[RMDB]
Chemical mapping of a 207-nucleotide RNA with 2A3. For 2A3, 993 sequencing reads were counted. The data come from the RNA Mapping Database (RMDB), library RNAMAK. For 2A3 the reverse transcriptase was SuperScript II with manganese. Conditions: 150 mM KOAc, 10 mM MgCl2 and 150 mM bicine (pH 8.5), 24 C.
RNA sequence: GGGAACGACUCGAGUAGAGUCGAAAAUCACGUGCUUCGGCACGUGAAAAAACCUUUGUGAUGUCACACUCGAGGAUCUGGUCUCUCCCAUUGGGAGAAGAAAUAUACCAGGGAGAGUGGACAUCACUCUGGUAAAAUGCCAGUCUUCGGACUGGCACGGGAACUAAAUCUUCGGAUUUAGUUCCCGAAAAGAAACAACAACAACAAC
Reactivity to 2A3 in 0.01 (KOAc 150mM, MgCl2 10mM, bicine 150mM(pH8.5), 24C), signal-to-noise 2, nucleotides 027 to 156: u080c000a000c010g000u000g020c010u040u080c140g160g060c000a000c030g010u020g030a010a010a000a010a000a010c020c000u020u010u010g000u000g000a010u000g000u000c030a050c010a000c300u030c020g020a200g000g000a020u000c000u010g020g020u010c030u000c020u010c060c000c130a300u170u300g010g010g020a000g000a020a050g050a000a180a000u290a020u090a060c000c000a000g020g000g000a010g000a000g000u000g020g020a000c000a000u000c000a000c000u000c000u000g000g030u090a110a140a000a000u040g010c010c010a000g000u000c000u000u140c260g070g000a000c000u010g000g000c000a000